[RMDB]
RNA sequence: GGGAACGACUCGAGUAGAGUCGAAAACCUGCCGAAUGAACUAGCCCUGAAAAUGGAUGGCGCUAAAGCGGGCUACUUAUACUUUGCCGUUAGCGCGAUAGCAUUUAUAAUGUACGCGUUAAUGAGUAACUUAAAGGACUUUCGAGUCCUUUAAGUUAAAAGAAACAACAACAACAAC
Reactivity to DMS in 0.01 (KOAc 150mM, MgCl2 10mM, bicine 150mM(pH8.5), 24C), signal-to-noise 6, nucleotides 027 to 126: c000c000u010g030c050c050g020a130a070u010g010a080a090c130u010a040g000c030c010c000u010g000a070a090a120a110u020g000g000a080u010g000g010c150g000c070u020a040a080a100g010c090g000g000g010c030u010a040c210u010u010a080u020a080c120u010u010u010g010c060c010g000u000u000a000g010c000g020c000g010a090u010a060g010c000a010u000u000u030a100u030a120a040u000g010u000a080c000g000c000g000u010u000a010a010u000g000a120g010u000
Reactivity to 2A3 in 0.01 (KOAc 150mM, MgCl2 10mM, bicine 150mM(pH8.5), 24C), signal-to-noise 9, nucleotides 027 to 126: c000c000u010g010c010c010g140a120a200u130g030a080a070c020u010a030g010c000c000c020u050g070a060a040a030a080u120g100g030a060u100g050g000c060g000c120u150a120a030a010g080c050g000g010g040c010u020a040c020u070u110a070u070a190c040u070u090u140g040c010c000g020u000u000a000g000c000g000c010g060a080u050a040g020c020a000u020u080u070a230u160a140a020u040g000u020a030c000g000c000g000u000u010a000a000u010g010a010g030u010